An RNA of 177 nucleotides, treated with 2A3 and DMS and read out base by base. Source: RMDB library OK2TST, as collected in RNAgym. The reactions ran in a buffer of 150 mM KOAc, 10 mM MgCl2 and 150 mM bicine (pH 8.5), at 24 C.

RNA sequence: GGGAACGACUCGAGUAGAGUCGAAAACAAAAAGGAAGGGUGACGUUAUCUCUUUUCCAACCACCCUAUAUGGCAAGCCUACAUGAUGAUAGUCACUUGUGUAGUUUACCUUUGCUAGCCAAUUAUCUAGUGAGAGAGUGUUCGCACUCUCUCACUAAAAAGAAACAACAACAACAAC
Reactivity to 2A3 in 0.01 (KOAc 150mM, MgCl2 10mM, bicine 150mM(pH8.5), 24C), signal-to-noise 2, nucleotides 027 to 126: c000a000a060a050a080a000g040g060a030a030g000g020g000u010g020a020c080g040u040u080a160u050c120u010c000u040u040u000u020c000c020a040a020c030c010a010c000c010c000u090a090u020a000u130g020g040c010a010a010g010c020c010u000a000c000a000u020g010a040u020g010a040u120a160g180u100c030a030c150u020u020g020u000g000u020a040g040u090u160u150a100c010c030u120u130u070g000c000u010a010g000c030c000a040a010u110u100a090u140c060
Reactivity to DMS in 0.01 (KOAc 150mM, MgCl2 10mM, bicine 150mM(pH8.5), 24C), signal-to-noise 2, nucleotides 027 to 126: c050a040a070a090a050a110g010g060a210a020g000g010g010u000g000a030c130g000u000u010a010u030c170u010c070u010u000u000u000c010c020a100a110c110c010a010c000c000c000u000a060u000a100u000g000g000c010a050a070g000c080c000u000a000c030a010u000g010a010u000g020a250u000a120g020u010c100a070c150u010u000g000u010g000u000a020g010u010u010u010a080c180c080u000u000u010g010c030u000a070g000c020c020a020a090u010u010a070u000c110